The data come from the RNA Mapping Database (RMDB), library TTRDES. The record gives the reactivity of an RNA of 177 nucleotides to 2A3 and DMS. The 2A3 profile rests on 8,149 reads. The RNA was probed in 150 mM KOAc, 10 mM MgCl2 and 150 mM bicine (pH 8.5) at 24 C.
RNA sequence: GGGAACGACUCGAGUAGAGUCGAAAAGAUAUGGACCAUUUCUGUGCCAGUCUGUCAUCGGAAACGAUGAGAGACGGUAAUACAGAUGUGGUCCUAAGUCAAAGGUACGAGGUUCGCCUCGUACCAAGCGUAUGGUAUUGUUCGCAAUACCAUACGCAAAAGAAACAACAACAACAAC
Reactivity to 2A3 in 0.01 (KOAc 150mM, MgCl2 10mM, bicine 150mM(pH8.5), 24C), signal-to-noise 4, nucleotides 027 to 126: g020a010u050a030u160g000g000a010c010c010a000u020u030u010c000u000g030u020g170c130c040a170g020u000c000u010g300u040c000a010u010c000g000g000a080a050a020c020g000a000u000g010a030g020a010g000a020c010g020g010u170a200a120u300a080c020a000g000a010u020g010u000g030g000u030c000c000u000a020a000g010u020c050a150a060a060g020g000u000a000c010g010a010g000g040u070u230c300g200c080c000u000c000g010u000a000c000c000a000a000
Reactivity to DMS in 0.01 (KOAc 150mM, MgCl2 10mM, bicine 150mM(pH8.5), 24C), signal-to-noise 2, nucleotides 027 to 126: g000a020u000a280u030g010g010a000c000c000a030u000u000u010c000u000g010u000g030c080c120a180g020u010c020u000g000u010c000a000u000c000g000g000a090a070a200c000g020a010u000g010a010g000a010g000a020c020g000g010u000a090a080u010a270c000a010g010a020u000g000u000g000g020u000c000c010u010a020a090g010u000c020a100a140a130g020g050u000a000c000g010a010g030g000u010u030c300g020c000c000u000c010g010u000a010c000c000a020a030
Notes
High DMS reactivity at an A or C suggests that its Watson-Crick edge is free.